[RMDB]
RNA sequence: GGGAACGACUCGAGUAGAGUCGAAAAGAUAUGGACGUGUUGUCAGCUCUAGCAGUAGCACGAUGAAAUUCUUCGGAAACGAAGAAUGGAGUGCUACUGCUGAGCUUGGAUUUACACGUCCUAAGUCCUGUGUCAGAAGGUUCGCCUUCUGACACAGAAAAGAAACAACAACAACAAC
Reactivity to 2A3 in 0.01 (KOAc 150mM, MgCl2 10mM, bicine 150mM(pH8.5), 24C), signal-to-noise 1, nucleotides 027 to 126: g070a060u110a140u290g000g010a020c000g000u000g020u000u020g010u030c000a050g000c040u000c160u300a010g000c000a000g020u030a000g000c000a000c040g110a140u030g040a000a010a010u000u000c020u020u030c010g110g040a170a150a070c010g030a000a000g000a010a010u000g000g010a000g020u000g000c000u020a000c000u000g000c020u000g000a070g010c000u010u120g010g000a010u260u120u210a020c000a010c000g000u000c000c010u000a000a000g010u030c020
Reactivity to DMS in 0.01 (KOAc 150mM, MgCl2 10mM, bicine 150mM(pH8.5), 24C), signal-to-noise 1, nucleotides 027 to 126: g000a100u010a270u010g010g010a010c010g030u000g010u010u000g010u000c010a050g010c000u000c000u010a020g020c000a020g000u000a000g000c030a000c000g010a130u010g000a140a170a010u000u000c000u000u000c010g000g000a120a160a220c010g000a020a000g010a020a000u000g030g000a040g010u000g000c010u000a000c000u000g000c000u020g010a060g020c010u000u000g040g000a060u010u010u000a010c000a000c000g030u000c000c000u000a020a070g010u000c020